[RMDB]
RNA sequence: GGGAACGACUCGAGUAGAGUCGAAAAUUAAAAUGUCACUAUUGUGGUUACCAAGAGACGCCACCGAAUCAAUGUCCAAAUUGUGAGAGUGAACACAUUCGACAAGUAGGUACUGGUACUCAGAAAGAUGUUAUACAACGUUCGCGUUGUAUAACAUAAAAGAAACAACAACAACAAC
Reactivity to DMS in 0.01 (KOAc 150mM, MgCl2 10mM, bicine 150mM(pH8.5), 24C), signal-to-noise 5, nucleotides 027 to 126: u000u010a040a050a080a110u000g000u000c030a070c040u000a090u000u010g020u000g020g000u010u000a120c030c040a100a100g000a110g010a100c110g000c050c030a030c040c040g000a080a100u010c110a090a070u000g000u000c030c070a050a070a100u000u010g030u000g010a170g000a080g010u000g010a090a060c040a050c050a050u000u000c180g010a030c060a050a110g010u000a060g000g010u000a050c110u000g000g010u000a040c040u000c040a120g020a070a060a090g000
Reactivity to 2A3 in 0.01 (KOAc 150mM, MgCl2 10mM, bicine 150mM(pH8.5), 24C), signal-to-noise 4, nucleotides 027 to 126: u040u040a030a020a040a070u180g000u030c010a010c080u150a180u190u230g020u020g040g020u030u060a040c010c030a100a010g030a010g030a070c050g000c030c000a010c010c010g070a050a040u080c040a050a090u050g020u000c010c010a060a140a180u100u060g010u030g030a090g000a010g110u120g030a080a040c030a000c000a020u040u030c020g020a020c030a070a010g030u030a030g100g000u030a060c060u050g000g010u050a060c010u030c020a010g150a030a070a000g120